[RMDB]
Chemical mapping of a 177-nucleotide RNA with DMS and 2A3. For DMS, 21,357 sequencing reads were counted.
RNA sequence: GGGAACGACUCGAGUAGAGUCGAAAAGAACAGGAUAACAGGACGCAAGAUAGGAAGUUCUGAUGAAUAGAGAAGAGCCGUAACUCGAGAACAACGGCAGCGUCCUGAAGAAUUUACGGCUCGAGAACGUAUAUGCAGGAUUCGUCCUGCAUAUACGAAAAGAAACAACAACAACAAC
Reactivity to DMS in 0.01 (KOAc 150mM, MgCl2 10mM, bicine 150mM(pH8.5), 24C), signal-to-noise 8, nucleotides 027 to 126: g020a160a130c110a120g010g000a110u030a100a160c010a010g000g010a020c000g030c000a140a100g020a200u040a120g010g020a070a270g000u000u000c000u000g010a130u030g000a100a130u040a100g000a110g010a110a080g000a020g000c000c000g020u000a010a090c100u000c040g010a020g010a040a010c020a020a300c060g000g090c100a100g000c020g000u000c000c010u000g000a050a070g030a110a070u010u010u000a020c000g000g000c010u000c010g000a120g010a100a160
Reactivity to 2A3 in 0.01 (KOAc 150mM, MgCl2 10mM, bicine 150mM(pH8.5), 24C), signal-to-noise 8, nucleotides 027 to 126: g050a060a030c090a060g120g030a070u080a210a020c000a000g010g000a000c000g000c020a030a110g030a280u230a130g160g060a100a050g000u000u010c010u030g030a060u090g060a070a150u180a080g090a000g070a300a000g010a010g010c000c000g000u020a030a020c020u010c110g050a020g010a020a010c050a060a030c060g170g000c050a000g010c000g000u000c000c000u000g000a000a000g020a010a010u030u020u020a010c010g000g000c000u000c000g040a050g030a050a030